[RMDB]
RNA sequence: GGGAACGACUCGAGUAGAGUCGAAAACUUGCCUGGGGUGGCCUGUUGGCGGAUCGCCACCGAAUCGACGCCGCCGUCGGUGGCUUCGACCGGCACGAUCGCCGUCGCACCGGUGGGCACUGGCGCAGAGCAUGCUUGCUUUCGAGCAAGCAUGCUCAAAAGAAACAACAACAACAAC
Reactivity to 2A3 in 0.01 (KOAc 150mM, MgCl2 10mM, bicine 150mM(pH8.5), 24C), signal-to-noise 2, nucleotides 027 to 126: c000u010u030g040c030c000u020g000g000g000g060u020g010g010c020c060u260g070u190u050g070g000c080g120g030a060u050c020g070c110c020a030c000c000g000a030a020u000c020g000a020c050g010c020c010g070c000c000g300u240c170g040g020u000g000g000c000u020u000c010g000a020c020c030g000g020c050a000c040g040a050u120c000g000c020c000g000u000c000g000c000a000c000c000g050g190u020g030g000g060c050a010c140u070g050g000c050g030c150a090

This 177-nucleotide RNA was probed chemically with 2A3.
Source: RMDB library OK1LIB, as collected in RNAgym.
The RNA was probed in 150 mM KOAc, 10 mM MgCl2 and 150 mM bicine (pH 8.5) at 24 C.
2A3 adducts were read by reverse transcription with SuperScript II with manganese.